[RMDB]
RNA sequence: GGGAACGACUCGAGUAGAGUCGAAAACUCGCACCUUAAAUCGGAGACCUCAUUUUGUAUGGGUGCUGCUGGGGCUGUGCCUUCCAAGCGACAGGACACACAGCAGAAGCAGCUUCUGAAAUUCCGAGUGUGUGUCUGUGUUUGCAAGCAUUUGAGGUACCCUUAUAUUUUUCGAAAUAUAAGGGUAAAAAGAAACAACAACAACAAC
Reactivity to 2A3 in 0.01 (KOAc 150mM, MgCl2 10mM, bicine 150mM(pH8.5), 24C), signal-to-noise 4, nucleotides 027 to 156: c020u020c020g010c020a070c010c010u130u140a030a120a100u160c090g050g010a030g070a080c000c000u050c030a050u040u130u150u110g120u080a110u160g010g000g020u020g000c020u020g000c010u040g010g040g040g000c020u030g040u080g020c010c020u000u050c050c010a170a040g050c040g070a020c020a050g000g020a010c010a010c000a000c000a150g040c000a010g050a030a010g060c060a030g020c000u090u060c020u030g080a100a090a070u140u060c060c040g060a180g050u020g000u010g010u000g010u010c020u010g200u010g060u070u130u190g060c050a080a050g050c020a040u080u120u090g020a010g050g000
Reactivity to DMS in 0.01 (KOAc 150mM, MgCl2 10mM, bicine 150mM(pH8.5), 24C), signal-to-noise 4, nucleotides 027 to 156: c040u000c040g010c050a090c030c010u010u000a030a090a110u000c050g020g010a080g010a090c020c010u010c020a140u000u010u000u000g000u010a080u000g010g010g010u010g020c010u000g030c020u000g010g020g030g020c030u010g060u000g000c010c020u010u000c040c030a080a200g030c060g010a080c060a120g000g010a050c300a020c020a020c010a050g020c010a040g010a140a080g000c050a060g020c080u000u000c060u000g010a090a090a140u000u000c030c010g010a080g020u000g010u000g020u010g010u000c020u000g010u010g020u000u000u000g040c020a070a140g020c030a110u010u000u000g000a080g020g020
An RNA of 207 nucleotides, treated with 2A3 and DMS and read out base by base. The RNA was probed in 150 mM KOAc, 10 mM MgCl2 and 150 mM bicine (pH 8.5) at 24 C. High 2A3 reactivity points to a flexible backbone, as in loops and unpaired stretches. For DMS the reverse transcriptase was MarathonRT. For DMS, 10,786 sequencing reads were counted. DMS (dimethyl sulfate) methylates the pairing face of unpaired adenines and cytosines. It was measured as part of the RMDB library OK3TST.